[RMDB]
RNA sequence: GGGAACGACUCGAGUAGAGUCGAAAAGAUGAGAAUACCUCUUCAGGUGAGCCCUCUUCCACAAUGACACCCUCAUCCAUGAAGAUAAUUGUAUCAGAAACAUUUCUAGCAAAGUUCAUCUCGUGGGAAUAAAUGCCCAUUUCGAUGGGCAUUUAUUAAAAGAAACAACAACAACAAC
Reactivity to 2A3 in 0.01 (KOAc 150mM, MgCl2 10mM, bicine 150mM(pH8.5), 24C), signal-to-noise 6, nucleotides 027 to 126: g060a040u150g020a010g040a170a060u150a150c020c010u060c010u070u100c100a010g010g050u030g060a030g030c010c000c010u000c020u050u010c030c010a060c020a070a180u130g030a040c000a060c030c010c000u040c030a080u010c030c010a050u060g040a070a040g010a040u070a080a050u110u050g060u080a120u140c040a030g060a020a090a050c090a210u040u090u070c020u010a030g010c030a040a010a090g090u070u080c010a040u010c030u010c040g020u040g010g010g010
Reactivity to DMS in 0.01 (KOAc 150mM, MgCl2 10mM, bicine 150mM(pH8.5), 24C), signal-to-noise 6, nucleotides 027 to 126: g000a090u030g020a090g020a130a070u030a080c050c030u000c080u010u000c100a060g020g000u000g010a100g010c040c030c030u000c030u000u000c020c030a040c120a080a080u020g010a070c160a030c020c020c020u020c050a060u000c010c010a020u000g000a100a060g010a030u030a050a070u010u010g020u010a070u020c130a050g010a070a070a130c150a090u020u000u010c020u000a050g000c050a050a050a070g000u010u010c070a040u000c010u010c040g030u000g010g000g030